An RNA of 177 nucleotides, treated with DMS and read out base by base. The reactions ran in a buffer of 150 mM KOAc, 10 mM MgCl2 and 150 mM bicine (pH 8.5), at 24 C. It was measured as part of the RMDB library RFM100.
[RMDB]
RNA sequence: GGGAACGACUCGAGUAGAGUCGAAAAAGACAGACGGACCGACGGACUCCGCCGCGUCCACCUGUCUGCCCGGCCCGGCACUGCGCGCACGGGCACGGCCGAGCGCGGAGCAGCCGUGCCCGCCGCCAGUGAGCUAUCCCUUCGGGGAUAGCUCACUAAAAGAAACAACAACAACAAC
Reactivity to DMS in 0.01 (KOAc 150mM, MgCl2 10mM, bicine 150mM(pH8.5), 24C), signal-to-noise 1, nucleotides 027 to 126: a000g020a020c000a020g010a140c100g000g000a010c010c030g000a020c000g000g000a300c090u000c000c020g000c010c060g000c130g000u050c020c000a300c140c000u000g000u000c000u000g000c010c000c000g030g030c030c060c010g000g000c040a010c080u050g000c140g000c040g000c160a020c110g050g000g020c020a000c030g020g000c020c030g000a030g020c000g020c280g000g000a210g000c060a090g090c010c000g000u000g000c000c000c000g000c300c010g000c000c020